Source information:
The data come from the RNA Mapping Database (RMDB), library OK1LIB. An RNA of 177 nucleotides, treated with DMS and 2A3 and read out base by base. For DMS, 1,328 sequencing reads were counted.
RNA sequence: GGGAACGACUCGAGUAGAGUCGAAAAGAAGUGAGAGGAAGGAGAGGAAGCGGAAACGCGACCUACCAUCCAUGAUAAAUAAAAAGAACUCUCCGACUCUCACGAAAUAAAUGGAUGGUAGGAAAAAGGGAUUAGAAAUGUUCGCAUUUCUAAUCCCAAAAGAAACAACAACAACAAC
Reactivity to DMS in 0.01 (KOAc 150mM, MgCl2 10mM, bicine 150mM(pH8.5), 24C), signal-to-noise 1, nucleotides 027 to 126: g070a300a140g000u000g000a030g000a000g090g030a180a300g030g000a000g000a000g000g000a100a100g000c000g020g000a000a010a090c000g080c000g010a150c000c000u000a040c010c000a000u020c000c000a000u000g000a020u080a000a030a050u000a000a130a000a010a170g000a040a090c030u000c000u040c000c060g000a300c000u000c000u000c000a000c090g070a090a100a050u060a000a030a080u000g020g000a000u000g000g050u000a000g000g000a010a010a050a120a020
Reactivity to 2A3 in 0.01 (KOAc 150mM, MgCl2 10mM, bicine 150mM(pH8.5), 24C), signal-to-noise 2, nucleotides 027 to 126: g110a160a050g000u040g000a000g000a000g090g030a250a010g000g020a000g020a000g160g030a120a050g010c000g020g020a060a020a000c040g050c040g030a090c000c010u000a020c000c000a020u020c000c000a000u080g090a040u060a060a210a010u120a000a060a030a030a010g140a070a030c010u000c000u000c000c000g000a020c000u010c000u000c000a000c000g000a010a010a010u110a000a080a000u030g000g000a000u000g000g020u000a000g000g000a020a020a020a020a020